[RMDB]
RNA sequence: GGGAACGACUCGAGUAGAGUCGAAAAGACUACAACUUCGGUUGUAGUCAAAUAAAAGCGUGUUCCGACUUCACGGAACAAGUACACGCAUGAAGUAUAAUAAAACCGGUUCCUUCGGGAACCGGAAUCAUUGGUUAAUCUUCGGAUUAACCAAUGAAAAAGAAACAACAACAACAAC
Reactivity to DMS in 0.01 (KOAc 150mM, MgCl2 10mM, bicine 150mM(pH8.5), 24C), signal-to-noise 3, nucleotides 027 to 126: g000a020c010u000a000c010a000a010c010u000u020c200g040g020u000u010g000u000a010g000u020c000a010a070a070u010a050a080a160a110g000c020g020u000g000u000u000c020c000g010a160c240u000u020c190a160c040g000g000a010a020c060a020a060g030u010a070c190a040c010g010c010a090u000g020a050a080g000u000a060u000a080a090u010a060a090a110a130c000c000g000g000u010u000c000c000u000u000c210g020g000g000a010a000c000c010g000g000a010a000
Reactivity to 2A3 in 0.01 (KOAc 150mM, MgCl2 10mM, bicine 150mM(pH8.5), 24C), signal-to-noise 2, nucleotides 027 to 126: g000a000c010u000a010c010a010a010c010u040u060c200g100g000u010u010g010u000a000g000u000c000a010a000a000u010a000a060a010a010g010c020g010u020g020u040u020c000c020g060a080c100u180u130c130a040c120g030g000a030a020c000a010a040g040u030a030c040a000c070g000c040a020u150g110a080a050g070u140a130u080a300a230u120a050a140a000a030c000c000g020g010u000u000c010c000u030u070c130g090g020g000a010a000c000c020g000g010a000a000
Source: RMDB library M2PK50, as collected in RNAgym. Structure probing data (DMS and 2A3) for a 177-nucleotide construct. The RNA was probed in 150 mM KOAc, 10 mM MgCl2 and 150 mM bicine (pH 8.5) at 24 C. For DMS, 2,345 sequencing reads were counted.